[RMDB]
RNA sequence: GGGAACGACUCGAGUAGAGUCGAAAAUUGGAUGAUCAGAUUCUAGAAAAUCAAAACCUACUUUGUUAUAGAGAUGAAUUUGCAUAUUUGAAGAACACUAGAUAUCAUGGGCAAGCUCAGCUACUCUUUCCACUGGUGUGUUUAUUUUCAUAGCCCAUCGUAUAAUGGGAUUCGUCCCAUUAUACGAAAAAGAAACAACAACAACAAC
Reactivity to DMS in 0.01 (KOAc 150mM, MgCl2 10mM, bicine 150mM(pH8.5), 24C), signal-to-noise 3, nucleotides 027 to 156: u000u000g010g010a110u000g000a100u010c050a180g010a110u010u000c020u010a140g000a130a070a080a080u000c050a070a080a060a110c050c030u000a050c040u000u000u000g010u000u010a150u000a090g020a130g000a190u000g010a070a060u000u010u000g010c030a050u010a100u010u010u010g000a090a080g000a040a050c060a080c020u000a070g010a090u000a060u000c060a080u020g010g010g040c070a050a080g010c050u000c030a120g020c030u000a040c020u000c020u000u000u010c030c010a090c080u010g010g020u000g020u000g020u000u000u010a080u030u000u000u010c040a090u010a110g010c000c000c000a190
Reactivity to 2A3 in 0.01 (KOAc 150mM, MgCl2 10mM, bicine 150mM(pH8.5), 24C), signal-to-noise 5, nucleotides 027 to 156: u120u070g040g010a010u030g030a060u100c060a070g060a120u090u060c030u140a070g070a070a110a020a040u070c040a030a080a070a060c020c010u040a080c060u140u140u090g040u110u100a120u120a170g040a010g010a060u060g040a070a080u040u100u090g020c010a030u040a120u150u110u150g040a040a030g020a090a020c040a030c090u050a050g040a070u090a030u130c040a040u030g030g030g000c040a030a010g000c040u010c070a030g000c020u050a080c020u010c000u030u080u010c040c010a020c040u030g030g000u050g030u010g020u040u060u070a100u000u070u020u050c060a060u090a050g020c020c000c000a020